[RMDB]
Source: RMDB library OK1LIB, as collected in RNAgym. An RNA of 177 nucleotides, treated with DMS and 2A3 and read out base by base. The reactions ran in a buffer of 150 mM KOAc, 10 mM MgCl2 and 150 mM bicine (pH 8.5), at 24 C.

RNA sequence: GGGAACGACUCGAGUAGAGUCGAAAAGACCUUGAGCUCCUGGCCUCAAGUAAUCCACCUGCCUCGGCCUCCCAAAGUUCUAGGAUUACUGACGAGUGUGGUGAGCCACCAUGCCUGGCCCACAUUCCUACAUACGCCAUUUCGAUGGCGUAUGUAGAAAAGAAACAACAACAACAAC
Reactivity to DMS in 0.01 (KOAc 150mM, MgCl2 10mM, bicine 150mM(pH8.5), 24C), signal-to-noise 4, nucleotides 027 to 126: g010a090c090c020u020u020g000a050g020c060u010c060c030u010g000g000c080c010u000c030a030a030g000u000a050a030u010c000c020a170c060c020u000g020c030c030u010c090g010g010c040c000u000c010c000c030a100a100a120g020u010u010c080u010a110g020g010a060u020u030a030c040u020g010a130c200g030a050g020u000g000u000g010g000u040g000a100g000c000c000a030c070c060a110u010g030c010c130u000g000g000c010c010c010a030c050a110u020u000c030
Reactivity to 2A3 in 0.01 (KOAc 150mM, MgCl2 10mM, bicine 150mM(pH8.5), 24C), signal-to-noise 6, nucleotides 027 to 126: g040a010c010c000u040u060g030a010g020c020u050c060c040u070g070g030c020c000u020c030a030a020g010u030a060a040u010c020c010a050c030c040u030g010c000c020u040c040g040g000c000c010u040c010c010c000a040a100a010g050u080u040c040u070a040g030g030a090u060u070a110c030u070g100a040c040g020a020g030u040g000u020g030g050u090g040a060g020c010c000a000c020c010a080u160g020c000c020u010g020g000c000c000c000a000c000a030u020u010c000